[RMDB]
Chemical mapping of a 177-nucleotide RNA with 2A3 and DMS.
Values cover nucleotides 27 to 126.
Source: RMDB library OK1LIB, as collected in RNAgym.
For 2A3, 1,000 sequencing reads were counted.
For 2A3 the reverse transcriptase was SuperScript II with manganese.

RNA sequence: GGGAACGACUCGAGUAGAGUCGAAAAGGGCAGUAUCGCUUUGGGCAGUGGCUCCACCUCUAACCGCGCUAUUACAACCGGUAUACGAGAAACGAGCGCAACAAGCGAUGGCGUGGUGAUUGGCUACCGGCACUAUCGUGUUCGCACGAUAGUGCCGAAAAGAAACAACAACAACAAC
Reactivity to 2A3 in 0.01 (KOAc 150mM, MgCl2 10mM, bicine 150mM(pH8.5), 24C), signal-to-noise 2, nucleotides 027 to 126: g070g000g020c030a050g110u150a050u080c000g020c000u150u130u120g040g020g000c090a080g070u090g020g010c000u000c000c020a040c000c000u000c030u030a020a020c000c000g030c000g030c120u060a060u130u200a110c090a160a090c010c000g020g050u130a180u090a050c120g010a060g000a150a130a020c110g040a050g060c090g000c030a000a120c020a110a000g010c020g000a000u000g010g000c030g000u000g000g060u020g050a160u000u060g040g000c080u030a050c040
Reactivity to DMS in 0.01 (KOAc 150mM, MgCl2 10mM, bicine 150mM(pH8.5), 24C), signal-to-noise 1, nucleotides 027 to 126: g000g000g000c030a110g000u000a010u000c000g000c000u010u000u000g000g000g000c210a100g080u000g000g010c000u140c090c080a060c300c000u000c000u000a000a020c020c000g010c140g000c000u000a000u050u000a110c170a070a110c050c040g000g010u000a080u000a060c110g000a040g050a040a190a300c300g020a060g020c000g050c040a090a040c040a020a100g040c050g000a050u050g000g000c170g000u000g000g050u000g000a230u000u070g000g000c000u010a090c030